Source: RMDB library OK2TST, as collected in RNAgym. Structure probing data (2A3 and DMS) for a 177-nucleotide construct. For DMS the reverse transcriptase was MarathonRT. Values cover nucleotides 27 to 126. 2A3 adducts were read by reverse transcription with SuperScript II with manganese. Conditions: 150 mM KOAc, 10 mM MgCl2 and 150 mM bicine (pH 8.5), 24 C.
[RMDB]
RNA sequence: GGGAACGACUCGAGUAGAGUCGAAAAUGGCAACAGAUGUGUUAGAGGCGACGGCUGAGGAAGUACCGAUCUUUGGCGCGGCAACUGCUGCGGCAAUUGCGUCUGGACGUGCAAUAGAGGGUGCAUAAUAUGCUUUUAUAUUCGUAUAAAAGCAUAUAAAAGAAACAACAACAACAAC
Reactivity to 2A3 in 0.01 (KOAc 150mM, MgCl2 10mM, bicine 150mM(pH8.5), 24C), signal-to-noise 6, nucleotides 027 to 126: u070g020g010c020a050a020c020a090g070a120u070g070u010g010u110u100a050g010a040g080g030c030g020a050c020g040g000c030u030g010a030g030g030a080a030g020u040a070c020c020g040a080u010c020u050u060u050g070g010c020g000c020g020g000c020a120a130c170u220g000c010u020g000c010g050g000c010a020a060u080u050g010c020g020u010c040u070g030g020a040c030g040u060g000c010a030a020u030a090g070a040g020g020g010u040g000c010a010u060a120
Reactivity to DMS in 0.01 (KOAc 150mM, MgCl2 10mM, bicine 150mM(pH8.5), 24C), signal-to-noise 9, nucleotides 027 to 126: u010g010g010c040a060a070c070a070g010a070u010g010u000g010u000u000a080g010a110g010g010c050g010a070c130g010g010c030u010g010a090g010g000a070a070g010u000a080c060c040g010a060u000c040u000u000u000g010g010c020g010c020g010g010c020a170a090c150u010g010c010u000g010c050g010g010c010a020a030u000u000g010c070g010u000c030u000g010g010a090c080g020u000g010c050a050a070u010a070g010a090g000g000g010u000g010c070a070u010a070